Structure probing data (DMS and 2A3) for a 177-nucleotide construct.
Reactivities are rounded to 0.1 and cut off at 0 and 3.
The RNA was probed in 150 mM KOAc, 10 mM MgCl2 and 150 mM bicine (pH 8.5) at 24 C.
For 2A3, 936 sequencing reads were counted.
The DMS profile rests on 671 reads.
[RMDB]
RNA sequence: GGGAACGACUCGAGUAGAGUCGAAAAGCAAGGAGCUUCGGCUCCUUGCAAAAGAAACCUCCAAAAGGAGCAAAGGACAUGCAAAGAAAAAGUCCAAAUGCAAAAGUCCGUUCUUCGGAACGGACAAGUUUAAACAGGAGUUCGCUCCUGUUUAAACAAAAGAAACAACAACAACAAC
Reactivity to DMS in 0.01 (KOAc 150mM, MgCl2 10mM, bicine 150mM(pH8.5), 24C), signal-to-noise 1, nucleotides 027 to 126: g010c000a000a020g010g010a070g020c000u000u010c210g010g000c020u000c000c010u010u000g050c000a050a020a050a190g010a100a130a080c070c050u000c000c130a040a010a040a120g000g000a020g000c090a050a100a280g020g020a000c020a040u020g000c040a040a170a220g040a030a150a010a050a170g010u010c010c030a020a050a110u000g040c090a190a100a080a150g000u000c010c000g010u000u000c010u000u000c180g000g000a020a000c000g050g010a000c010a000a040
Reactivity to 2A3 in 0.01 (KOAc 150mM, MgCl2 10mM, bicine 150mM(pH8.5), 24C), signal-to-noise 1, nucleotides 027 to 126: g030c000a000a000g000g010a010g000c010u110u090c200g070g030c020u030c020c000u010u020g020c010a000a000a000a000g030a090a060a000c020c000u040c040c000a120a240a090a150g090g110a120g000c060a070a120a050g110g000a010c030a020u190g110c050a200a180a180g150a160a300a100a020a000g000u040c010c000a000a100a030u140g000c010a090a000a000a120g000u000c000c000g000u010u030c000u040u080c150g060g020a000a000c000g000g000a000c000a000a000